This 177-nucleotide RNA was probed chemically with DMS. DMS adducts were read by reverse transcription with MarathonRT. The reactions ran in a buffer of 150 mM KOAc, 10 mM MgCl2 and 150 mM bicine (pH 8.5), at 24 C.

[RMDB]
RNA sequence: GGGAACGACUCGAGUAGAGUCGAAAAGAUAUGGAGCCUGACCCAGCCGCCCAGCAACAGCGCUGUCUACGAUCGGAAACGAUCGUAGACAGCGACAUGCUGUAACAAGCUGCAGGCUCCUAAGUCAUCUACUAGUAGUCUUCGGACUACUAGUAGAAAAAGAAACAACAACAACAAC
Reactivity to DMS in 0.01 (KOAc 150mM, MgCl2 10mM, bicine 150mM(pH8.5), 24C), signal-to-noise 2, nucleotides 027 to 126: g000a040u000a300u010g020g010a060g000c010c010u010g010a220c230c300c080a040g020c020c070g010c300c300c010a030g000c010a000a040c300a140g000c010g000c000u000g010u000c000u000a000c020g030a020u000c000g000g020a120a070a220c000g050a050u000c000g030u000a010g050a010c000a030g000c000g000a000c020a080u000g010c000u010g010u000a040a090c240a210a070g010c000u000g010c010a030g000g000c000u000c010c000u010a000a060g010u000c040a150